[RMDB]
RNA sequence: GGGAACGACUCGAGUAGAGUCGAAAAUACGCGAUCGCGCGGCAUAUCGGCGCCGAUGCAUUACGCGGCAUGCGCGCCGGCAUUAGCUAGCGCUAGCAUUAAUCGCGCGAUUACGUACGGCCGGCGCGUGUUCGUAGUGAUUCGUCACUACGAACACAAAAGAAACAACAACAACAAC
Reactivity to DMS in 0.01 (KOAc 150mM, MgCl2 10mM, bicine 150mM(pH8.5), 24C), signal-to-noise 6, nucleotides 027 to 126: u000a020c010g010c010g000a050u000c040g010c010g020c010g010g010c160a120u000a100u000c130g020g010c080g020c010c050g010a030u010g020c010a110u010u010a110c110g020c080g020g000c090a080u010g010c070g000c000g000c000c000g020g000c050a070u010u010a100g010c020u000a110g010c090g010c070u000a070g010c080a090u000u000a100a110u010c060g010c000g010c010g000a050u010u010a030c070g000u000a040c160g000g010c010c010g010g000c060g010c080
Reactivity to 2A3 in 0.01 (KOAc 150mM, MgCl2 10mM, bicine 150mM(pH8.5), 24C), signal-to-noise 4, nucleotides 027 to 126: u090a000c000g000c010g010a010u010c020g000c000g000c000g020g000c040a060u110a090u230c090g100g000c020g000c060c040g070a030u050g010c000a020u140u160a090c140g010c070g070g020c030a050u160g050c030g000c000g010c030c000g020g000c010a080u070u160a020g010c030u040a060g040c030g020c110u020a010g010c000a010u110u190a080a140u150c010g000c000g000c000g000a020u040u050a020c030g000u010a040c030g070g030c000c020g090g060c080g000c040

Description: The record gives the reactivity of an RNA of 177 nucleotides to DMS and 2A3. For DMS, 9,503 sequencing reads were counted. 2A3 adducts were read by reverse transcription with SuperScript II with manganese. Conditions: 150 mM KOAc, 10 mM MgCl2 and 150 mM bicine (pH 8.5), 24 C. DMS (dimethyl sulfate) methylates the pairing face of unpaired adenines and cytosines. The 2A3 profile rests on 8,175 reads.